This 177-nucleotide RNA was probed chemically with 2A3 and DMS. The 2A3 profile rests on 8,421 reads. Source: RMDB library OK2TRN, as collected in RNAgym. Conditions: 150 mM KOAc, 10 mM MgCl2 and 150 mM bicine (pH 8.5), 24 C. DMS adducts were read by reverse transcription with MarathonRT.

[RMDB]
RNA sequence: GGGAACGACUCGAGUAGAGUCGAAAAGGGUCUUUGGAAGGUAAUUAGGUCAUGAGAGUGGAGCCCUCAUGGUGGGAUUAGUGCUCUUAUAAGAAAAGACAUGAGAUCCUCCCCCCACUCCACCCCACACUAGUAUAGGUUUCGACCUAUACUAGUGAAAAGAAACAACAACAACAAC
Reactivity to 2A3 in 0.01 (KOAc 150mM, MgCl2 10mM, bicine 150mM(pH8.5), 24C), signal-to-noise 6, nucleotides 027 to 126: g040g010g010u050c060u070u160u100g080g050a110a080g070g030u130a080a110u130u150a110g100g000u050c020a020u030g020a010g000a010g070u070g030g090a040g020c000c030c010u010c020a070u080g080g040u070g040g040g000a020u030u070a050g080u030g070c030u010c010u040u060a160u050a150a140g130a050a200a010a000g040a000c010a020u140g020a140g000a140u020c000c000u020c020c010c000c010c000c000a050c020u010c010c000a040c000c000c000c010a020
Reactivity to DMS in 0.01 (KOAc 150mM, MgCl2 10mM, bicine 150mM(pH8.5), 24C), signal-to-noise 6, nucleotides 027 to 126: g000g010g010u000c030u000u000u000g010g010a130a120g000g010u000a040a060u010u000a090g000g000u000c040a040u000g010a030g010a060g020u000g010g010a110g010c300c080c020u000c060a040u010g010g020u010g020g010g010a030u000u000a170g010u010g010c140u000c010u010u000a080u000a120a140g010a110a070a050a040g000a060c010a030u000g000a100g000a040u000c000c010u000c010c010c010c010c010c020a110c070u000c010c010a210c010c000c000c020a200